Conditions: 150 mM KOAc, 10 mM MgCl2 and 150 mM bicine (pH 8.5), 24 C. An RNA of 207 nucleotides, treated with 2A3 and read out base by base. Source: RMDB library OK3TST, as collected in RNAgym. Reactivities are given for positions 27 through 156. For 2A3, 752 sequencing reads were counted.
RNA sequence: GGGAACGACUCGAGUAGAGUCGAAAACUGGCCAAUUUUUGCAUUUUUAGUAGAGAUGGGGUUUCACCAUGUUGGCCAGGCUGGUCUCGAACUCCUGGCCUCAAGUGAUCCUCCUACCUCAGCCUACCAAAGUGCUGGGAUUACAGGCAUGAGCCAACCAUUAAGUGCUCUUCGGAGCACUUAAUGGAAAAGAAACAACAACAACAAC
Reactivity to 2A3 in 0.01 (KOAc 150mM, MgCl2 10mM, bicine 150mM(pH8.5), 24C), signal-to-noise 1, nucleotides 027 to 156: c020u010g100g000c040c030a060a080u000u050u000u010u150g020c010a090u010u120u070u110u130a060g030u010a040g010a010g000a060u090g000g000g000g050u020u070u070c010a000c000c050a130u140g040u140u070g030g000c000c000a000g000g020c080u090g000g060u030c050u080c140g060a150a030c000u000c030c000u000g010g000c010c000u010c020a070a000g000u000g000a000u010c000c040u000c020c000u060a070c000c030u030c020a030g030c000c020u040a140c070c040a070a000a000g060u070g030c000u020g000g070g010a020u040u130a020c050a060g090g000c050a070u190g000a020g100c000c000a030a050